[RMDB]
RNA sequence: GGGAACGACUCGAGUAGAGUCGAAAACGAGGCCGAUAGGCGUAGGCGAUGGACAACAGGUAGAGAUUCCUGUACCAGUGCUAAUUGUUUAACCGAUGGGGUGACACAGAAGGAUAGGGAAUCGCACGAAUGGAAAUGUGCGUCCAAGCAGUGAGUGGUCCAAUGUGACCUUCGGGUCACAUUGGACAAAAGAAACAACAACAACAAC
Reactivity to 2A3 in 0.01 (KOAc 150mM, MgCl2 10mM, bicine 150mM(pH8.5), 24C), signal-to-noise 1, nucleotides 027 to 156: c080g020a030g000g060c000c010g140a100u070a200g010g040c030g040u060a010g000g080c040g000a010u040g020g070a000c000a080a010c030a100g050g030u040a080g000a000g010a200u130u170c000c050u050g000u080a120c080c040a040g000u020g020c010u100a170a030u070u050g080u150u020u150a060a020c020c030g040a110u190g010g010g000g010u060g000a000c000a000c000a050g060a000a050g080g010a030u020a140g000g000g030a020a010u130c060g000c020a000c040g000a070a070u030g030g020a050a030a050u080g000u100g020c010g000u000c020c000a060a000g000c000a000g060u020g050a000g000u080g010
Structure probing data (2A3) for a 207-nucleotide construct. The reactions ran in a buffer of 150 mM KOAc, 10 mM MgCl2 and 150 mM bicine (pH 8.5), at 24 C.